This 207-nucleotide RNA was probed chemically with 2A3 and DMS.
The reactions ran in a buffer of 150 mM KOAc, 10 mM MgCl2 and 150 mM bicine (pH 8.5), at 24 C.
DMS adducts were read by reverse transcription with MarathonRT.
The data come from the RNA Mapping Database (RMDB), library RNAMAK.
For DMS, 2,364 sequencing reads were counted.
RNA sequence: GGGAACGACUCGAGUAGAGUCGAAAAGAUGAUUUGGCUUCGGCCAAAUCAUCAAAGAUAUGGAGCGGUGGACAUGCUGAUGGGUCGGAAACGACCCAUACCAGCAACAGCCACGCGCUCCUAAGUCAAAAGGCUGAUCUGGUUCGCCAGAUCAGCCGGUUACUUAAGUCUUCGGACUUAAGUAACCAAAAGAAACAACAACAACAAC
Reactivity to 2A3 in 0.01 (KOAc 150mM, MgCl2 10mM, bicine 150mM(pH8.5), 24C), signal-to-noise 3, nucleotides 027 to 156: g010a000u000g000a000u000u000u000g010g000c020u040u090c250g020g000c000c000a000a000a000u000c000a000u000c000a000a010a000g000a000u020a010u030g000g000a000g000c010g020g020u010g000g010a060c140a300u300g010c010u010g010a010u010g000g000g000u000c010g000g000a000a000a000c010g000a000c020c000c000a000u010a050c080c000a010g010c020a090a100c070a030g000c020c000a010c010g210c010g010c010u010c000c000u000a000a000g000u000c010a020a030a210a000g000g000c000u000g000a010u000c000u000g000g020u080u080c200g050c060c000a000g000a010u000c010a000g000c000c010
Reactivity to DMS in 0.01 (KOAc 150mM, MgCl2 10mM, bicine 150mM(pH8.5), 24C), signal-to-noise 1, nucleotides 027 to 156: g000a030u010g000a000u000u010u000g010g040c020u000u000c300g050g080c000c010a000a000a000u000c010a030u000c000a000a070a130g020a100u000a150u000g000g010a000g020c040g020g030u000g020g000a080c030a300u010g030c000u000g020a070u010g000g020g030u000c020g000g040a070a060a160c010g080a000c000c000c010a020u000a020c170c000a040g030c000a050a120c080a140g000c020c000a020c050g020c000g020c010u020c000c010u000a000a080g010u010c040a080a080a090a110g030g020c010u000g020a000u000c000u000g000g000u000u000c300g040c030c000a010g040a020u000c000a020g040c000c000